[RMDB]
RNA sequence: GGGAACGACUCGAGUAGAGUCGAAAAGACUGCCUCAUGCUGGUUGGGCCCUGGCAGCGCACAGCUAGUGGGACAUGUUGCACAAGCAUGCCUGCCUGCAUGGUGUAGCUGCACGUACGCUAGUGCGCACCCCUCCAUAUUUCGAUAUGGAGGGGUGAAAAGAAACAACAACAACAAC
Reactivity to 2A3 in 0.01 (KOAc 150mM, MgCl2 10mM, bicine 150mM(pH8.5), 24C), signal-to-noise 4, nucleotides 027 to 126: g010a010c040u070g050c300c040u070c050a100u220g060c090u100g020g070u070u090g050g040g000c000c000c010u040g080g000c000a010g000c000g010c010a010c000a030g000c010u030a020g010u020g000g000g060a100c000a010u030g030u030u060g070c100a140c020a150a030g010c000a010u010g010c010c000u040g010c010c010u020g020c020a120u190g190g000u010g010u010a090g000c010u010g010c020a010c010g010u030a010c020g010c180u100a050g010u010g030c030g010
Reactivity to DMS in 0.01 (KOAc 150mM, MgCl2 10mM, bicine 150mM(pH8.5), 24C), signal-to-noise 9, nucleotides 027 to 126: g000a040c020u000g010c030c020u000c040a100u010g030c140u000g010g000u000u000g010g000g010c010c010c010u000g010g000c010a020g000c020g000c010a020c010a110g010c010u000a070g010u000g010g010g000a170c010a010u000g010u000u000g010c300a110c250a140a040g010c000a020u000g000c000c010u000g010c010c040u000g000c010a080u000g020g010u000g010u000a060g020c010u000g010c010a110c070g010u000a030c030g010c160u010a140g010u000g000c020g010